Structure probing data (2A3 and DMS) for a 177-nucleotide construct.
For 2A3 the reverse transcriptase was SuperScript II with manganese.
It was measured as part of the RMDB library OK2TRN.
The reactions ran in a buffer of 150 mM KOAc, 10 mM MgCl2 and 150 mM bicine (pH 8.5), at 24 C.
For 2A3, 5,603 sequencing reads were counted.
RNA sequence: GGGAACGACUCGAGUAGAGUCGAAAAAGGGAUGGGGGUGCUAUCCUGUGUCUUCAACUCGCUGGCUGGGAAGAUCUGCUACGACGCCCUGGACCCAGCCAAGUAUGCCAGAUGGAAGCCCUGGCUGAUGCCAAAAUACAUUCGUGUAUUUUGGCAUAAAAGAAACAACAACAACAAC
Reactivity to 2A3 in 0.01 (KOAc 150mM, MgCl2 10mM, bicine 150mM(pH8.5), 24C), signal-to-noise 3, nucleotides 027 to 126: a000g020g000g010a030u050g020g010g000g000g040u040g030c000u010a090u130c020c060u030g040u010g020u060c030u060u060c040a050a050c010u010c070g080c080u020g000g000c000u010g010g000g010a080a030g030a160u040c040u070g050c020u070a110c070g080a050c050g060c010c020c030u020g030g010a050c010c000c000a000g010c000c000a020a000g060u040a040u120g010c010c000a030g010a070u110g030g080a060a030g010c020c000c000u000g010g030c030u030g020
Reactivity to DMS in 0.01 (KOAc 150mM, MgCl2 10mM, bicine 150mM(pH8.5), 24C), signal-to-noise 7, nucleotides 027 to 126: a090g000g010g010a070u010g010g000g000g010g010u010g020c040u000a080u010c090c070u000g020u000g000u010c020u000u000c060a060a090c070u000c090g010c100u000g010g010c010u010g000g000g000a110a130g000a110u000c050u000g010c070u010a120c140g000a090c110g000c020c030c010u000g000g010a250c020c010c000a030g010c000c010a020a060g010u000a070u000g000c020c010a020g000a100u000g000g010a130a120g010c100c140c010u000g010g010c020u000g000